RNA sequence: GGGAACGACUCGAGUAGAGUCGAAAACAUCUCUGGGAGAAAGAAUUCCCCUGCUCUUAUACCGAUGAGGUCCAGAGGACUACUUGUUGCGGAACCAGCCAUCAAAUAUAAGAAGGACCUAACUACAAUUAUCCCUUUGAUUCGUCAAAGGGAUAAUAAAAGAAACAACAACAACAAC
Reactivity to DMS in 0.01 (KOAc 150mM, MgCl2 10mM, bicine 150mM(pH8.5), 24C), signal-to-noise 5, nucleotides 027 to 126: c140a120u000c030u000c020u010g000g010g010a090g010a100a080a110g000a120a170u010u000c010c010c010c140u010g010c050u000c020u010u000a100u000a090c080c200g000a100u010g010a130g010g010u010c020c020a080g010a080g000g020a130c080u000a070c120u010u000g000u000u010g010c060g010g010a090a080c050c050a060g000c050c020a040u010c040a030a090a090u010a050u010a070a070g010a110a110g000g000a070c050c030u000a040a080c120u000a100c150a080
Reactivity to 2A3 in 0.01 (KOAc 150mM, MgCl2 10mM, bicine 150mM(pH8.5), 24C), signal-to-noise 2, nucleotides 027 to 126: c040a060u030c000u000c040u090g020g080g040a080g030a170a240a040g090a100a210u110u070c000c000c010c000u020g050c010u000c000u010u180a110u040a120c020c040g100a110u070g070a020g000g050u060c010c010a070g020a070g030g020a010c020u120a040c030u070u150g030u090u080g090c020g010g030a090a050c020c010a020g000c030c000a030u060c040a050a060a020u060a030u010a070a030g040a040a020g030g000a000c000c020u030a010a080c020u050a030c040a040

An RNA of 177 nucleotides, treated with DMS and 2A3 and read out base by base. The reactions ran in a buffer of 150 mM KOAc, 10 mM MgCl2 and 150 mM bicine (pH 8.5), at 24 C. It was measured as part of the RMDB library OK2TRN.